Source: RMDB library OK3TST, as collected in RNAgym. This 207-nucleotide RNA was probed chemically with DMS and 2A3.
RNA sequence: GGGAACGACUCGAGUAGAGUCGAAAAAUUGGAUGGGCGACUUCCGGGGUGUGUCAUGGGAUGACCCCGAUGAUUGGCACUCAUUCGAUGAUGCUGUUGCCGCCGCCGAAACGCAGGAGAGUUGGGGCAUCGGCUACGUCGUCGCCAAAGAUAAUGAACUACCUCUAUGAUUCGUCAUAGAGGUAGUAAAAGAAACAACAACAACAAC
Reactivity to DMS in 0.01 (KOAc 150mM, MgCl2 10mM, bicine 150mM(pH8.5), 24C), signal-to-noise 3, nucleotides 027 to 156: a100u010u000g000g010a040u010g050g010g020c010g020a040c020u000u000c030c040g030g010g020g020u000g020u010g040u000c010a210u020g030g050g020a130u000g010a120c040c000c000c010g000a020u000g010a130u010u000g010g030c030a060c040u000c020a080u000u010c020g030a030u000g000a130u000g020c020u010g020u000u000g010c010c040g000c040c040g020c020c010g010a090a040a070c070g010c050a300g020g000a150g000a130g020u010u000g040g010g000g020c060a120u000c050g010g030c010u000a040c060g030u000c030g020u000c040g000c020c080a050a070a160g010a130u020a090a100u010g020a150
Reactivity to 2A3 in 0.01 (KOAc 150mM, MgCl2 10mM, bicine 150mM(pH8.5), 24C), signal-to-noise 5, nucleotides 027 to 156: a010u090u070g040g010a040u050g080g050g020c010g010a020c010u060u020c070c020g000g000g030g000u100g020u030g010u050c060a150u200g100g120g000a040u110g070a100c000c020c010c020g020a040u070g000a020u020u120g050g000c020a020c040u010c030a090u140u090c070g040a070u080g000a020u060g000c040u010g000u070u040g000c010c070g080c020c020g010c010c010g070a120a090a030c090g010c120a110g060g080a100g010a030g060u090u290g060g000g000g000c000a000u020c030g000g000c000u020a030c080g030u020c020g010u000c020g030c010c000a020a040a010g110a020u160a090a060u240g060a000
Record summary
The reactions ran in a buffer of 150 mM KOAc, 10 mM MgCl2 and 150 mM bicine (pH 8.5), at 24 C. The DMS profile rests on 7,187 reads.